Notes: Structure probing data (DMS and 2A3) for a 177-nucleotide construct. For DMS, 40,760 sequencing reads were counted. For 2A3 the reverse transcriptase was SuperScript II with manganese.
RNA sequence: GGGAACGACUCGAGUAGAGUCGAAAAGAGGACACUGAGGAGUGUGAACACCUGACCCUGGCUGAGUGGUGGGAACUCCUCUUCUUCAUCAAGAAGCUGGAUGGACCUGACCAUCAGGAGGUUCUCCCCAAUGUAACAGAUUCGUCUGUUACAUUGGAAAAGAAACAACAACAACAAC
Reactivity to DMS in 0.01 (KOAc 150mM, MgCl2 10mM, bicine 150mM(pH8.5), 24C), signal-to-noise 9, nucleotides 027 to 126: g000a100g010g010a090c050a050c050u000g010a140g010g010a060g020u000g010u000g010a110a110c100a100c030c020u000g010a110c070c010c010u000g010g010c020u000g000a080g020u010g010g020u000g010g000g000a060a170c030u000c010c000u000c000u000u000c000u000u000c210a120u010c220a050a030g000a020a020g010c210u000g010g000a030u010g010g000a270c020c020u000g000a070c020c010a050u000c020a030g000g000a080g000g000u000u000c020u000c040c170
Reactivity to 2A3 in 0.01 (KOAc 150mM, MgCl2 10mM, bicine 150mM(pH8.5), 24C), signal-to-noise 9, nucleotides 027 to 126: g090a020g040g030a010c020a010c090u100g090a060g140g050a050g070u050g010u040g080a080a030c040a030c040c010u040g070a090c000c000c020u040g160g030c030u030g050a070g120u070g050g010u010g020g000g000a020a010c010u010c010c020u000c000u000u010c000u010u010c010a140u020c000a010a020g010a010a010g040c180u050g030g010a090u120g060g030a040c010c020u050g220a070c010c000a020u030c010a010g020g020a020g020g030u040u020c030u060c030c010